[RMDB]
RNA sequence: GGGAACGACUCGAGUAGAGUCGAAAACUGAGUGGAUAAUAGGGAAGACAGUGCGGAAUUUCUCAGUGGGCAGAGACGGAUUUGAGUACAUAUGGGGAAAUCACGAACCAGUCAGAGUGUGGGCCCACUCCAAAGUCUAGUUCGCUAGACUUUGGAGAAAAGAAACAACAACAACAAC
Reactivity to 2A3 in 0.01 (KOAc 150mM, MgCl2 10mM, bicine 150mM(pH8.5), 24C), signal-to-noise 1, nucleotides 027 to 126: c030u050g010a030g070u110g000g040a070u070a180a150u110a220g010g010g000a040a000g030a030c040a030g020u010g040c010g080g060a070a120u020u090u040c040u020c000a020g020u060g000g020g020c030a030g000a000g010a050c020g010g000a050u070u130u120g070a050g030u050a070c060a050u140a140u180g010g070g000g030a000a020a090u030c000a030c110g000a030a000c000c010a000g070u050c030a010g080a010g070u120g010u070g020g030g000c000c000c000a040
Reactivity to DMS in 0.01 (KOAc 150mM, MgCl2 10mM, bicine 150mM(pH8.5), 24C), signal-to-noise 2, nucleotides 027 to 126: c020u010g010a090g030u000g000g000a070u010a050a080u000a130g000g000g000a050a050g030a080c100a060g000u020g000c070g010g000a080a080u000u000u000c080u010c000a090g000u010g010g000g030c030a080g000a110g020a090c130g010g010a110u010u000u000g020a120g010u000a060c130a070u000a110u000g010g010g010g010a020a080a080u010c040a050c110g000a070a050c050c020a040g010u000c050a050g010a110g010u010g010u000g020g010g000c010c030c060a080